[RMDB]
RNA sequence: GGGAACGACUCGAGUAGAGUCGAAAAAGCGUGCGUCGGUACGUGUCGACUACUACGCGUGAAACUGUGGCUCCUUUCAUACGGUUUGCUGUCCAUCAGUUCCGGCGCGACCGCGAGCCCACCUGCGCCCAGCUGGCAGUUUCGACUGCCAGCUGGGAAAAGAAACAACAACAACAAC
Reactivity to 2A3 in 0.01 (KOAc 150mM, MgCl2 10mM, bicine 150mM(pH8.5), 24C), signal-to-noise 1, nucleotides 027 to 126: a020g050c050g020u020g000c020g010u000c040g080g060u020a000c010g040u000g100u080c020g030a010c030u100a110c010u000a000c080g030c020g020u000g000a100a060a010c040u040g040u130g080g010c070u000c050c020u060u050u060c150a110u240a070c040g020g090u040u050u190g060c050u020g080u050c030c020a110u120c050a050g010u080u000c000c020g000g000c010g070c010g000a090c070c000g030c000g000a010g010c000c030c020a050c000c080u120g020c100g010